[RMDB]
Chemical mapping of a 177-nucleotide RNA with DMS and 2A3. It was measured as part of the RMDB library M2PK90. The RNA was probed in 150 mM KOAc, 10 mM MgCl2 and 150 mM bicine (pH 8.5) at 24 C.
RNA sequence: GGGAACGACUCGAGUAGAGUCGAAAACAGUUAUGUGCGUCCCUCCCGAAGCUGCGCGCUCCGUCGAAGAGGACGACCAUCGCCGAUAGAGGACGACCGGUCUUCGGUCAAGGGAAUAAGAGUAAAACACUAAUGUGUCGUUCGCGACACAUUAGUGAAAAGAAACAACAACAACAAC
Reactivity to DMS in 0.01 (KOAc 150mM, MgCl2 10mM, bicine 150mM(pH8.5), 24C), signal-to-noise 3, nucleotides 027 to 126: c060a120g000u000u010a050u010g020u000g000c100g010u000c000c000c020u010c110c010c000g020a020a040g030c010u000g010c150g010c060g000c050u000c000c030g010u000c050g010a100a130g010a100g000g010a090c100g000a080c070c040a110u000c060g000c190c010g000a060u000a070g010a120g000g010a060c060g000a080c090c030g000g000u010c060u000u010c010g000g000u010c120a090a080g000g000g000a020a050u010a040a050g000a080g000u010a030a060a110a140
Reactivity to 2A3 in 0.01 (KOAc 150mM, MgCl2 10mM, bicine 150mM(pH8.5), 24C), signal-to-noise 3, nucleotides 027 to 126: c030a050g030u170u180a150u260g150u130g070c060g020u030c000c000c000u010c020c000c000g020a000a010g000c010u040g010c060g010c020g040c160u000c020c020g130u040c030g020a080a030g060a060g070g030a080c040g070a070c040c020a100u110c030g000c040c000g030a010u020a060g090a050g020g050a070c000g050a090c030c040g030g020u130c050u020u030c010g000g030u020c020a010a030g030g000g060a030a030u130a110a030g070a010g120u180a000a070a020a080